Structure probing data (2A3 and DMS) for a 207-nucleotide construct. The data come from the RNA Mapping Database (RMDB), library M2RFPK.
[RMDB]
RNA sequence: GGGAACGACUCGAGUAGAGUCGAAAAUCAUUGAGAUGCUGGGCGCUAUGGUCGUCCUCCUCCGGCUGAUCUCCUUCUCAGCUGCUGACCGGCGCCGCACAGGCGGCAUCUCAGCUUCGUGUGCAAAAAAAGAAUGGUCGGUUCGCCGACCAUUCAAGCGAUACUGAAAGUUCGCUUUCAGUAUCGCAAAAGAAACAACAACAACAAC
Reactivity to 2A3 in 0.01 (KOAc 150mM, MgCl2 10mM, bicine 150mM(pH8.5), 24C), signal-to-noise 1, nucleotides 027 to 156: u140c010a040u030u100g000a000g010a020u000g000c020u030g000g010g030c030g000c040u050a150u300g040g020u050c020g050u140c000c060u030c000c000u040c010c000g010g000c010u000g000a020u040c010u120c180c050u210u110c040u010c010a000g000c030u010g020c100u050g020a010c000c000g000g000c000g000c010c000g000c000a030c010a010g150g010c000g010g000c000a000u000c000u000c010a000g000c060u170u130c090g100u040g000u050g060c060a170a000a000a000a000a030a100g000a010a010u000g000g000u010c010g000g000u030u110c130g030c080c000g000a000c000c000a000u000u000c000a000a000
Reactivity to DMS in 0.01 (KOAc 150mM, MgCl2 10mM, bicine 150mM(pH8.5), 24C), signal-to-noise 1, nucleotides 027 to 156: u000c110a080u000u000g000a020g000a030u000g020c000u000g010g010g000c040g020c010u000a090u010g100g020u000c000g030u000c090c000u000c020c010u030c050c000g030g060c030u000g010a030u000c050u000c110c030u020u010c080u010c010a050g040c000u000g000c050u010g000a030c030c020g000g020c000g060c020c000g000c120a120c080a110g030g010c070g020g000c010a020u000c020u000c000a050g030c060u010u000c120g050u010g050u000g020c040a000a000a090a180a080a130a250g000a030a000u000g000g020u000c000g060g030u020u010c300g000c010c000g000a030c000c000a000u000u000c000a070a190
Description:
Conditions: 150 mM KOAc, 10 mM MgCl2 and 150 mM bicine (pH 8.5), 24 C.